[RMDB]
RNA sequence: GGGAACGACUCGAGUAGAGUCGAAAAGAGUUCACUUCGGUGAACUCAAAAAGCGUACUACGAGAGGCAUGGCUAGAUCCAUAUCCCAAAUAGGAUAUGAUCUUGGACCCAUGCUACCCACCUCGUAUCGCAAAAAAACGACAGUUCGCUGUCGUAAGUGCAUUGCCUUCUUCGGAAGGCAAUGCACAAAAGAAACAACAACAACAAC
Reactivity to 2A3 in 0.01 (KOAc 150mM, MgCl2 10mM, bicine 150mM(pH8.5), 24C), signal-to-noise 2, nucleotides 027 to 156: g010a000g000u000u050c020a000c050u050u100c220g030g000u000g000a000a000c000u000c000a000a000a030a000a030g060c070g050u110a120c010u000a000c040g010a000g000a010g020g000c020a000u000g000g030c050u040a020g000a020u060c150c000a020u030a030u020c040c040c020a100a230a210u300a070g000g000a000u000a000u000g010a000u000c000u040u070g090g000a050c000c000c000a000u000g000c000u050a080c040c010c010a060c010c000u010c030g000u030a040u300c070g010c050a130a000a000a000a000a000a060c000g010a000c000a000g030u040u050c160g080c120u000g000u010c000g000u010a120a000
Source information: Structure probing data (2A3) for a 207-nucleotide construct. It was measured as part of the RMDB library RNAMAK.